[RMDB]
RNA sequence: GGGAACGACUCGAGUAGAGUCGAAAACGACAGUCCUCCGCCUCGAGGGCGUGUUGGACGACCGCCUCGUUCUCCUCGGGGGCGAAGGUACAGGUCGAGUAGACGACCGUCCCGCCCUCGCGGGUGGUCAUACGGUACCCUUCGGGGUACCGUAUGAAAAAGAAACAACAACAACAAC
Reactivity to DMS in 0.01 (KOAc 150mM, MgCl2 10mM, bicine 150mM(pH8.5), 24C), signal-to-noise 4, nucleotides 027 to 126: c100g000a080c130a140g000u010c000c000u000c030c030g020c040c040u010c070g010a070g020g000g010c010g010u010g010u000u010g030g010a100c050g010a060c050c040g010c020c000u000c020g010u000u010c020u000c000c090u000c130g030g020g000g010g020c020g000a050a060g010g010u010a040c100a140g020g020u000c000g000a210g010u020a130g000a170c060g000a050c020c010g020u000c030c010c000g010c010c010c010u000c040g000c150g000g000g020u000g010g000
Reactivity to 2A3 in 0.01 (KOAc 150mM, MgCl2 10mM, bicine 150mM(pH8.5), 24C), signal-to-noise 3, nucleotides 027 to 126: c040g070a040c040a040g050u030c010c000u000c010c020g010c020c010u060c090g150a120g060g060g000c020g010u070g030u030u090g010g040a030c020g010a010c000c010g020c020c000u070c010g050u100u070c040u040c030c010u080c070g020g010g000g000g020c010g020a150a070g030g020u200a060c110a200g000g030u010c000g020a030g060u300a070g060a080c030g010a020c020c010g020u010c010c010c000g010c020c010c010u000c000g010c020g000g000g020u030g010g030